[RMDB]
RNA sequence: GGGAACGACUCGAGUAGAGUCGAAAAGAUAUGGACGUGGACAUGCCUGAGGGAUCGGAAACGAUCCUCCAGGCAACAGCCACAGUCCUAAGUCGGCGAUCGCCCUACCUUCGGGUAGGGCGAUCAAGAUCAUGAAGUGCUUCGGCACUUCAUGAUCAAAAGAAACAACAACAACAAC
Reactivity to DMS in 0.01 (KOAc 150mM, MgCl2 10mM, bicine 150mM(pH8.5), 24C), signal-to-noise 1, nucleotides 027 to 126: g020a030u010a290u000g000g020a030c000g020u020g010g000a040c040a210u000g010c000c000u010g020a000g010g000g000a010u010c000g000g000a060a150a150c000g000a010u000c000c000u000c000c000a000g010g000c000a000a000c200a190g020c020c000a010c000a130g000u000c000c000u020a040a090g000u000c040g000g010c230g000a000u000c000g000c000c000c000u020a000c000c010u000u000c180g020g010g040u000a010g000g000g000c010g000a000u000c030a020a090